[RMDB]
RNA sequence: GGGAACGACUCGAGUAGAGUCGAAAAUACAUAAAUAUUAUACUAGCAUUUACCAUCUCACUUCUAGGAAUACUAUUAUAUCGCUCACACCUCAUAUCCUCCCUACUUUGCUUAGAAGGAAUAAUACCCCAUCAUUUUAGUUCGCUAAAAUGAUGGGAAAAGAAACAACAACAACAAC
Reactivity to DMS in 0.01 (KOAc 150mM, MgCl2 10mM, bicine 150mM(pH8.5), 24C), signal-to-noise 2, nucleotides 027 to 126: u010a090c040a100u030a070a080a070u060a100u020u000a050u010a110c010u010a050g000c020a060u030u000u070a070c040c040a070u010c020u030c010a060c040u010u010c000u000a000g000g000a050a040u010a060c130u000a040u000u020a070u010a040u000c080g020c030u000c010a030c050a010c080c040u030c040a090u000a090u000c060c040u010c010c000c030u020a030c090u000u010u000g000c070u000u000a040g000a070a030g040g030a000a130u050a000a050u040a100c140
Reactivity to 2A3 in 0.01 (KOAc 150mM, MgCl2 10mM, bicine 150mM(pH8.5), 24C), signal-to-noise 5, nucleotides 027 to 126: u100a000c030a020u220a060a150a040u250a080u220u190a090u070a110c040u050a010g040c020a040u050u070u090a090c040c010a040u030c010u010c060a050c020u060u060c030u040a040g070g070a050a070u060a090c030u010a030u160u030a040u040a050u150c040g000c020u020c000a060c000a040c010c010u030c000a030u040a040u100c000c000u000c000c000c000u010a030c030u050u040u060g030c010u010u040a010g010a130a010g040g100a030a000u100a100a020u050a050c010